[RMDB]
RNA sequence: GGGAACGACUCGAGUAGAGUCGAAAACAGCACUUGGUUCGCCAAGUGCUGAAAAAACCUUUGUGAUGGUCAGCGAGGAUCUAUUACCUCCCAUUGGGAGGUUAUAGGGAGCUGUCAUCACUCUGGUAAAAAAGAUUAUGGAUUCGUCCAUAAUCAAAGUAAUUGAUAGUUUCGACUAUCAAUUACUAAAAGAAACAACAACAACAAC
Reactivity to 2A3 in 0.01 (KOAc 150mM, MgCl2 10mM, bicine 150mM(pH8.5), 24C), signal-to-noise 4, nucleotides 027 to 156: c010a000g010c010a000c000u020u010g010g040u100u120c200g070c100c000a020a000g000u000g000c000u000g000a000a000a000a000a000a000c000c000u010u000u010g010u000g000a010u000g000g130u240c010a010g000c010g050a200g020g000a010u000c000u010a000u010u020a000c000c000u000c000c000c120a260u090u300g010g010g000a000g000g000u000u000a000u000a000g000g000g010a010g000c000u000g000u010c000a000u000c000a000c010u000c000u010g010g020u090a110a100a020a000a010a010g000a000u010u010a000u010g010g000a020u020u100c240g040u020c060c000a000u000a000a000u000c010a040a010
Reactivity to DMS in 0.01 (KOAc 150mM, MgCl2 10mM, bicine 150mM(pH8.5), 24C), signal-to-noise 2, nucleotides 027 to 156: c000a010g010c010a010c000u010u010g010g010u010u000c300g030c050c010a010a020g000u010g040c000u010g000a000a010a070a090a120a010c010c010u000u010u000g010u000g010a020u010g020g020u010c000a010g000c010g020a130g070g020a070u000c010u000a010u010u000a030c000c010u000c000c020c020a300u020u010g050g060g000a030g020g010u000u000a000u010a020g000g030g010a090g060c010u000g000u010c010a010u000c010a010c000u000c020u000g000g030u000a000a020a070a130a140a130g000a000u000u000a010u010g000g010a050u000u020c300g010u000c010c000a020u000a000a010u000c000a040a070